[RMDB]
Annotation:
An RNA of 177 nucleotides, treated with 2A3 and DMS and read out base by base. For DMS, 12,554 sequencing reads were counted. Values are in units of 0.01, from 0 to 300, in steps of 10. 2A3 is a SHAPE reagent: it acylates the 2'-hydroxyl of flexible nucleotides of all four kinds.

RNA sequence: GGGAACGACUCGAGUAGAGUCGAAAACAAACCCGCUGACCUCACGGUUUGGGCGACAGGGCGGGCCGCGUGAGAUGAAUCGACACAGUGACGAAUCCGAAUCUGACCGUCCGGUAAGGAAGGCGUCGAUAGCUCUUACAUUCGUGUAAGAGCUAUCAAAAGAAACAACAACAACAAC
Reactivity to 2A3 in 0.01 (KOAc 150mM, MgCl2 10mM, bicine 150mM(pH8.5), 24C), signal-to-noise 6, nucleotides 027 to 126: c030a010a070a020c010c000c010g000c040u030g030a040c000c000u050c020a030c040g110g060u100u160u120g160g020g000c020g010a040c030a050g000g000g040c020g000g010g000c010c010g050c010g030u060g020a080g000a080u150g110a060a130u100c040g100a040c030a000c020a100g060u060g140a060c030g040a040a050u040c020c000g010a050a080u020c020u020g060a120c020c020g020u000c010c010g000g020u050a020a010g030g010a020a010g050g000c010g030u060c040
Reactivity to DMS in 0.01 (KOAc 150mM, MgCl2 10mM, bicine 150mM(pH8.5), 24C), signal-to-noise 9, nucleotides 027 to 126: c140a090a120a150c040c030c010g010c050u000g010a300c040c020u010c060a050c070g010g020u000u000u010g030g020g010c030g000a110c090a060g020g000g010c040g000g000g010c030c030g020c040g020u000g010a130g000a120u000g000a100a100u010c060g010a130c080a090c080a090g020u010g010a110c040g000a100a110u000c020c020g010a090a100u010c050u000g000a150c070c020g020u000c010c010g010g010u010a060a080g000g010a050a130g010g010c030g000u010c070